[RMDB]
RNA sequence: GGGAACGACUCGAGUAGAGUCGAAAACCGUAGGCUCCGAUUGAAGCGAAGAACACCUACUGAAAACUAUGUGGGAACUCGGCAAACACACCUUCGAAAGAGGGUUACUGUCCACAUAGUUUUCAGUAGGUGGGAGCUUUAGAGGAGCCUAAACGGACUGUUUUUCUUUCUUCGGAAAGAAAAACAGAAAAGAAACAACAACAACAAC
Reactivity to DMS in 0.01 (KOAc 150mM, MgCl2 10mM, bicine 150mM(pH8.5), 24C), signal-to-noise 1, nucleotides 027 to 156: c000c000g050u020a080g030g000c010u000c010c000g010a300u000u010g040a000a020g000c030g030a080a200g030a080a210c000a000c010c000u000a000c000u000g000a030a000a020a080c030u000a050u030g020u000g000g010g020a040a150c080u000c050g050g000c170a090a110a200c100a100c110a060c000c010u010u000c000g030a200a200a300g000a030g010g000g080u020u000a030c040u000g010u000c010c000a000c020a030u000a000g010u000u000u000u000c010a010g040u000a000g000g000u000g000g000g000a150g010c010u000u000u000a040g010a300g020g010a030g010c000c000u000a000a000a010c020g020g000a300
Reactivity to 2A3 in 0.01 (KOAc 150mM, MgCl2 10mM, bicine 150mM(pH8.5), 24C), signal-to-noise 1, nucleotides 027 to 156: c000c000g000u010a000g000g000c010u020c010c030g190a230u030u220g020a000a010g020c020g120a240a000g000a030a020c020a010c000c000u000a000c000u010g000a000a000a000a000c010u010a000u010g040u040g020g010g050a130a060c060u060c180g160g000c170a050a300a010c050a000c010a010c040c020u020u010c000g080a140a070a030g010a010g020g010g020u000u060a040c050u070g030u050c000c000a000c000a000u000a000g000u000u000u000u000c010a010g000u010a010g000g000u000g000g000g000a010g010c000u000u000u010a010g000a020g010g000a000g070c010c000u000a000a000a000c000g020g040a020